[RMDB]
RNA sequence: GGGAACGACUCGAGUAGAGUCGAAAAUCGCUUUCGAUCCCUCGAUCUGCCACGUCUGUUCGAAGAGUAGUCUUCGUGGCAACUGGCAGUUAAACCGUGUAGUACCGAUGGAGGUUGGAAACAAUGCACAUCACUACCGGGUCUUGGGCAGUGCGAUCACUUGUCCUUGGUUCGCCAAGGACAAGUGAAAAGAAACAACAACAACAAC
Reactivity to 2A3 in 0.01 (KOAc 150mM, MgCl2 10mM, bicine 150mM(pH8.5), 24C), signal-to-noise 1, nucleotides 027 to 156: u030c010g010c000u110u060u220c160g220a300u210c000c010c000u040c050g040a110u030c010u000g000c000c010a030c190g040u040c140u090g060u010u010c000g000a000a000g030a000g110u300a120g170u050c030u040u000c030g130u180g040g020c030a000a000c000u000g000g000c010a000g000u000u140a060a020a030c000c000g090u070g000u120a000g000u070a210c020c050g000a000u000g000g020a080g050g010u000u010g010g000a000a080a020c010a000a030u140g130c120a000c000a060u000c000a020c000u000a000c020c000g000g040g000u000c000u000u020g010g010g000c030a030g020u000g040c000g020a020u050